[RMDB]
Record summary:
Structure probing data (2A3 and DMS) for a 177-nucleotide construct. 2A3 is a SHAPE reagent: it acylates the 2'-hydroxyl of flexible nucleotides of all four kinds. For DMS, 3,738 sequencing reads were counted. 2A3 adducts were read by reverse transcription with SuperScript II with manganese. The reactions ran in a buffer of 150 mM KOAc, 10 mM MgCl2 and 150 mM bicine (pH 8.5), at 24 C. The data come from the RNA Mapping Database (RMDB), library M2PK50.
RNA sequence: GGGAACGACUCGAGUAGAGUCGAAAAGCUGUACGCUUCGGCGUACAGCAAAUAAAAUCAGCGGUUAAAAAGCAGGCGUUAUAACCGCUCAACGCCUGCUUAAAAGUACUACCUUCGGGUAGUACAAGCUUUAUACUAACUUCGGUUAGUAUAAAGCAAAAGAAACAACAACAACAAC
Reactivity to 2A3 in 0.01 (KOAc 150mM, MgCl2 10mM, bicine 150mM(pH8.5), 24C), signal-to-noise 4, nucleotides 027 to 126: g000c000u000g010u000a000c000g000c020u020u110c270g100g000c010g000u000a000c000a000g010c000a000a000a000u020a000a010a000a060u060c030a010g040c010g110g090u140u180a150a160a040a010a000g000c010a010g010g000c000g000u040u070a060u040a170a050c020c030g000c030u020c020a010a000c000g020c000c000u000g000c000u000u010a000a010a000a010g000u000a000c000u000a000c020c000u020u080c220g110g000g010u000a000g000u000a010c000a000a000
Reactivity to DMS in 0.01 (KOAc 150mM, MgCl2 10mM, bicine 150mM(pH8.5), 24C), signal-to-noise 3, nucleotides 027 to 126: g010c010u000g000u000a010c000g020c000u000u000c200g030g020c000g030u010a020c000a000g010c000a000a030a050u000a050a060a090a080u010c100a060g000c080g000g000u010u010a060a090a060a020a010g000c000a000g000g010c000g000u000u000a050u000a080a150c050c090g000c140u010c120a020a000c010g010c000c000u000g000c000u010u010a010a050a110a150g000u000a000c000u010a000c000c000u000u010c230g020g000g020u000a000g020u000a000c010a050a060